RNA sequence: GGGAACGACUCGAGUAGAGUCGAAAAUGAAACAUUGCUGAAUUCGUACAACUGCUUUACAAUUUAGGCAAAACUUUAAAUGUUUCAGUGAUUAAUUGUUGCAAACCGAUACAAAUCUGUUCCAGGGAAAAUGCAAACUAAGUAAACAACAACCAAACGGGUGAUAAAAUUUCGAUUUUAUCACCCGAAAAGAAACAACAACAACAAC
Reactivity to 2A3 in 0.01 (KOAc 150mM, MgCl2 10mM, bicine 150mM(pH8.5), 24C), signal-to-noise 2, nucleotides 027 to 156: u070g000a000a000a020c020a030u000u030g000c000u000g010a050a050u070u090c080g010u060a000c020a150a080c130u110g060c030u120u080u060a010c050a060a030u000u060u040a060g050g000c050a010a040a060a070c000u140u170u250a100a100a080u040g000u000u010u010c010a000g010u000g030a010u000u120a090a030u060u120g000u010u020g010c000a020a000a150c020c020g000a020u080a080c040a010a130a050u030c060u080g040u070u000c070c020a020g000g000g060a000a100a030a020u030g000c020a020a000a010c040u110a040a020g160u150a050a020a000c000a000a000c000a010a000c070c020a100a120a060
Reactivity to DMS in 0.01 (KOAc 150mM, MgCl2 10mM, bicine 150mM(pH8.5), 24C), signal-to-noise 1, nucleotides 027 to 156: u000g000a070a030a020c050a020u000u000g040c010u040g030a040a150u010u010c080g000u000a000c090a070a110c080u000g020c110u030u030u020a010c040a110a080u000u000u000a040g030g040c040a110a150a170a130c120u000u000u010a000a120a090u000g040u000u010u000c040a040g010u000g000a080u000u010a130a140u010u010g000u000u030g000c000a040a120a070c010c000g000a210u000a120c090a040a080a080u030c040u010g010u040u000c080c030a110g010g010g000a080a060a080a110u000g040c070a040a100a300c010u050a030a190g020u030a040a050a040c090a080a080c010a080a230c010c010a040a080a250

This 207-nucleotide RNA was probed chemically with 2A3 and DMS. Reactivities are given for positions 27 through 156. It was measured as part of the RMDB library OK3TST. For DMS, 1,207 sequencing reads were counted. The RNA was probed in 150 mM KOAc, 10 mM MgCl2 and 150 mM bicine (pH 8.5) at 24 C. DMS adducts were read by reverse transcription with MarathonRT. High 2A3 reactivity points to a flexible backbone, as in loops and unpaired stretches. Values are in units of 0.01, from 0 to 300, in steps of 10.